Annotation
The record gives the reactivity of an RNA of 177 nucleotides to 2A3 and DMS. High DMS reactivity at an A or C suggests that its Watson-Crick edge is free. As a SHAPE reagent, 2A3 marks flexible, mostly unpaired nucleotides at the ribose 2'-OH. For DMS, 1,802 sequencing reads were counted.

RNA sequence: GGGAACGACUCGAGUAGAGUCGAAAAGAUAUGGACUGUGGCUUGGACCUGUCUCGUCGGAAACGACGAAACAGCUAGCCACUGUCCUAAGUCAAAAUCUACCAUGCAGUUCGCUGCAUGGUAGAAAUCAUCAAAACUCGUUCGCGAGUUUUGAUGAAAAAGAAACAACAACAACAAC
Reactivity to 2A3 in 0.01 (KOAc 150mM, MgCl2 10mM, bicine 150mM(pH8.5), 24C), signal-to-noise 1, nucleotides 027 to 126: g000a000u000a020u070g000g010a020c000u000g030u010g020g050c010u050u250g090g070a300c030c000u030g010u010c010u000c000g030u000c000g000g000a010a010a020c000g010a010c000g000a000a030a000c010a010g060c010u020a000g010c020c010a000c000u010g000u000c000c000u000a010a000g000u000c010a020a000a030a300u000c000u010a010c010c000a020u000g020c000a010g020u090u170c210g180c200u000g000c010a000u000g000g000u000a000g000a000a000a000
Reactivity to DMS in 0.01 (KOAc 150mM, MgCl2 10mM, bicine 150mM(pH8.5), 24C), signal-to-noise 1, nucleotides 027 to 126: g020a000u010a020u010g010g000a030c000u000g000u000g010g040c010u020u010g050g000a120c270c010u000g010u000c010u000c000g020u000c000g020g000a020a000a030c000g020a020c000g010a000a010a000c000a000g000c060u000a040g020c000c000a000c000u010g010u000c000c000u000a010a060g000u000c020a070a060a120a170u010c000u000a000c000c000a000u010g010c000a000g010u000u020c300g040c000u000g000c010a000u000g000g010u000a000g000a000a090a050